[RMDB]
RNA sequence: GGGAACGACUCGAGUAGAGUCGAAAAGAUUUACGAGAGUAAAUCGCAUUUGGAAACAAAUGUAAGCUGGAAUUACGACGCUAACGGCCUACAUUGGUAUCGAACCCAAUGUAGAUAAGUGCUAGUAGAUGGCAGACUACUAGACACAUGCGUUGAAACUAAUAGCACCUUUCGAGGUGCUAUUAGUAAAAGAAACAACAACAACAAC
Reactivity to DMS in 0.01 (KOAc 150mM, MgCl2 10mM, bicine 150mM(pH8.5), 24C), signal-to-noise 5, nucleotides 027 to 156: g020a020u000u000u000a010c000g010a300g000a300g020u000a010a010a010u000c000g010c000a030u000u000u000g010g000a300a180a260c000a000a020a000u010g020u000a110a170g040c000u000g010g000a140a120u000u000a160c030g000a030c010g040c020u000a120a160c080g030g040c090c000u000a010c000a000u000u000g000g020u000a300u000c070g000a160a040c180c000c000a020a020u000g000u000a010g010a060u000a030a120g010u000g020c010u000a010g000u000a000g000a150u000g020g030c130a080g010a170c000u000a020c010u000a000g000a120c000a020c030a100u000g020c030g040u000u000g010a150a090
Reactivity to 2A3 in 0.01 (KOAc 150mM, MgCl2 10mM, bicine 150mM(pH8.5), 24C), signal-to-noise 7, nucleotides 027 to 156: g000a000u000u010u010a010c010g020a010g000a000g090u000a000a010a010u000c010g000c010a000u000u000u010g020g020a060a040a020c000a010a000a000u020g010u050a040a040g010c030u030g030g060a090a050u160u110a170c060g000a000c000g020c010u020a090a010c010g030g000c010c010u000a000c000a000u000u010g000g010u070a100u250c110g040a050a050c010c000c000a000a000u000g000u000a000g000a010u070a070a050g000u010g000c000u000a000g000u010a010g010a110u090g080g050c020a030g030a060c000u000a000c000u000a000g160a040c000a000c000a020u130g000c000g000u000u030g030a120a050